[RMDB]
RNA sequence: GGGAACGACUCGAGUAGAGUCGAAAAGCGGGGCUUGAAACGCGGGUAGCGCGCACGCCCGGCGAAGGAGUUCGCAUACGCGGUGUGCUGGUGCCGAAGUGUCUGCUGCAACGGCACGCUCGACACCUAGAACAUACCGUAUUCGUACGGUAUGUAAGCGUACAUAUCUGUUCGCAGAUAUGUACGCAAAAGAAACAACAACAACAAC
Reactivity to DMS in 0.01 (KOAc 150mM, MgCl2 10mM, bicine 150mM(pH8.5), 24C), signal-to-noise 2, nucleotides 027 to 156: g040c050g000g030g040g060c040u010u000g010a070a110a030c010g000c000g000g000g050u000a130g060c040g030c030g050c030a100c100g040c010c000c000g000g030c030g010a100a040g040g010a180g010u000u000c020g000c020a110u000a200c060g000c080g040g030u000g030u000g000c040u030g000g030u000g040c010c000g030a050a130g010u010g010u000c060u010g040c050u000g010c150a120a160c110g020g000c000a040c020g010c070u000c000g020a080c000a010c020c010u000a150g010a150a100c000a010u000a030c000c000g040u000a030u000u000c300g040u000a010c000g020g000u000a000u000g000u000a020a140
Reactivity to 2A3 in 0.01 (KOAc 150mM, MgCl2 10mM, bicine 150mM(pH8.5), 24C), signal-to-noise 2, nucleotides 027 to 156: g030c020g000g030g030g030c050u070u090g090a100a130a040c060g020c030g020g030g050u120a060g050c050g000c010g000c070a000c010g010c000c010c000g010g000c010g000a020a020g070g070a080g080u020u050c030g000c040a060u090a190c080g020c100g040g020u010g010u010g020c040u050g000g020u010g010c000c030g030a090a030g030u030g040u060c080u080g060c080u100g020c040a080a040c020g010g000c000a000c030g040c050u030c010g010a010c010a030c010c000u030a050g030a110a000c000a000u000a010c000c000g010u000a010u010u050c070g030u050a000c000g000g000u000a000u000g010u010a010a050